[RMDB]
RNA sequence: GGGAACGACUCGAGUAGAGUCGAAAAGCAAACAUUCAGUUGCUCAGUUGGUUAGUUACCUUUCUGAACGCUGUAAUGUUAUUGCUGAUUCUAAGUCCUUCACACUUAUCUUUGGUGGCGUAGCUUACACCUGAGUGUAGUUCGCUACACUCAGGUGAAAAGAAACAACAACAACAAC
Reactivity to DMS in 0.01 (KOAc 150mM, MgCl2 10mM, bicine 150mM(pH8.5), 24C), signal-to-noise 3, nucleotides 027 to 126: g020c000a010a020a050c010a020u010u000c000a010g010u000u020g070c020u000c000a010g000u000u000g010g010u000u000a190g010u020u000a070c000c000u000u000u010c010u010g010a000a000c000g000c000u000g000u020a000a000u000g010u000u000a090u010u000g020c000u000g010a190u000u000c060u010a060a100g000u000c060c040u000u010c070a080c090a060c090u000u000a070u010c130u010u000u000g010g010u000g000g000c110g000u020a070g020c060u000u000a200
Reactivity to 2A3 in 0.01 (KOAc 150mM, MgCl2 10mM, bicine 150mM(pH8.5), 24C), signal-to-noise 2, nucleotides 027 to 126: g020c020a020a000a000c010a020u000u000c000a020g000u160u200g190c010u000c000a010g000u020u010g030g010u010u070a080g030u110u170a040c000c000u000u110u090c000u010g000a000a000c020g000c000u050g020u290a010a010u020g030u040u020a100u090u050g000c010u010g020a060u050u000c030u040a020a070g050u000c020c020u080u100c040a040c000a000c070u110u170a100u190c040u120u030u180g040g010u010g020g010c110g060u050a020g000c020u060u020a010
Chemical mapping of a 177-nucleotide RNA with DMS and 2A3. The data come from the RNA Mapping Database (RMDB), library 15KREP. 2A3 adducts were read by reverse transcription with SuperScript II with manganese. Conditions: 150 mM KOAc, 10 mM MgCl2 and 150 mM bicine (pH 8.5), 24 C.